RNA sequence: GGGAACGACUCGAGUAGAGUCGAAAAUUUCAGAGUGGCUAGUGCACCAGACGGUAACCGAUGCACUGCCGAGUAGCGAAAGUCGUUCCUUUUGGAAUGGCCUAGUUGCCCAGAAGCCUCCCCUCAACAUUCUCAGCGAAUUCGUUCGCUGAGAAUGAAAAGAAACAACAACAACAAC
Reactivity to DMS in 0.01 (KOAc 150mM, MgCl2 10mM, bicine 150mM(pH8.5), 24C), signal-to-noise 3, nucleotides 027 to 126: u020u010u020c060a190g020a130g040u060g000g020c020u010a030g020u000g000c000a010c020c030a090g000a110c250g030g010u070a050a130c130c090g010a100u000g000c000a000c030u000g010c000c010g000a080g020u030a040g000c010g000a100a210a060g010u000c000g020u000u000c000c000u020u010u000u050g010g010a030a020u010g010g000c000c020u000a200g010u010u000g020c000c070c040a090g010a100a070g000c010c030u010c030c000c000c080u010c050a080a170
Reactivity to 2A3 in 0.01 (KOAc 150mM, MgCl2 10mM, bicine 150mM(pH8.5), 24C), signal-to-noise 5, nucleotides 027 to 126: u050u060u050c040a050g070a050g100u190g020g010c050u230a010g000u010g020c020a030c040c010a060g070a160c060g120g090u120a110a020c060c030g010a020u050g000c000a010c000u000g020c010c000g020a040g020u060a010g000c010g020a040a020a000g010u010c000g000u000u000c010c000u030u060u130u170g000g000a010a000u020g000g000c000c000u000a010g040u020u020g000c000c000c020a040g030a010a010g000c010c000u040c020c000c000c000u060c050a030a070